[RMDB]
RNA sequence: GGGAACGACUCGAGUAGAGUCGAAAAACUCCGUACUUACGAGUACGGAGAACUGUGGUACUAUACCUCAGUUUUAUCAGGUGUUCAUUAAAAUCACCUGAAAAUACUGAGGCUAUGUUUCACUGAAGUUCCACGGGGACUUCGGUCCCCGUGGAACAAAAGAAACAACAACAACAAC
Reactivity to 2A3 in 0.01 (KOAc 150mM, MgCl2 10mM, bicine 150mM(pH8.5), 24C), signal-to-noise 1, nucleotides 027 to 126: a000c000u000c000c020g000u000a000c000u050u040a110c250g100a010g000u000a000c000g000g000a000g010a000a000c040u030g000u010g000g020u080a000c000u120a000u020a030c000c000u020c000a000g000u000u000u030u000a250u000c000a000g000g040u010g030u170u040c120a230u110u210a050a160a170a130u120c000a000c000c020u000g020a000a020a000a030u270a000c000u000g000a030g000g000c020u000a010u050g000u050u020u020c000a000c000u010g130a090a010
Background: Conditions: 150 mM KOAc, 10 mM MgCl2 and 150 mM bicine (pH 8.5), 24 C. This 177-nucleotide RNA was probed chemically with 2A3. The 2A3 profile rests on 508 reads.